[RMDB]
RNA sequence: GGGAACGACUCGAGUAGAGUCGAAAAGACACGACGGAGACGUCGUGUCAAGUCCAGUGCGAAAGCACUGGACAAAUAAGGGCUGCCUUUCUCGCUGACUUUCAGCCCCAAACAAACAAUGUCAGCAAAAAUGCCGAUUAUUCGUAAUCGGCAUUUUAAAAGAAACAACAACAACAAC
Reactivity to DMS in 0.01 (KOAc 150mM, MgCl2 10mM, bicine 150mM(pH8.5), 24C), signal-to-noise 3, nucleotides 027 to 126: g000a030c000a010c020g020a010c000g020g000a230g010a230c010g040u000c010g000u020g000u000c010a030a050g030u000c010c000a010g000u000g000c000g020a150a110a210g010c000a010c000u010g000g020a010c020a010a020a070u020a100a160g010g000g030c030u000g010c300c090u000u010u000c070u010c130g030c010u000g000a020c000u000u000u010c020a030g010c020c010c010c150a030a050a110c190a060a110a100c070a040a050u000g000u000c010a000g010c010a020
Reactivity to 2A3 in 0.01 (KOAc 150mM, MgCl2 10mM, bicine 150mM(pH8.5), 24C), signal-to-noise 1, nucleotides 027 to 126: g010a000c000a000c000g010a000c000g030g000a080g020a040c020g010u010c010g000u010g010u010c020a010a000g020u000c010c010a000g020u000g020c000g090a170a010a020g000c010a020c010u000g020g010a000c000a000a010a010u060a020a050g000g000g010c010u000g010c000c060u110u160u020c120u070c100g050c010u010g010a010c000u050u110u070c040a010g000c000c020c010c040a100a180a020c020a020a040a000c030a000a060u070g000u010c000a000g000c030a060
The record gives the reactivity of an RNA of 177 nucleotides to DMS and 2A3. It was measured as part of the RMDB library OK2TRN. Values cover nucleotides 27 to 126. Conditions: 150 mM KOAc, 10 mM MgCl2 and 150 mM bicine (pH 8.5), 24 C.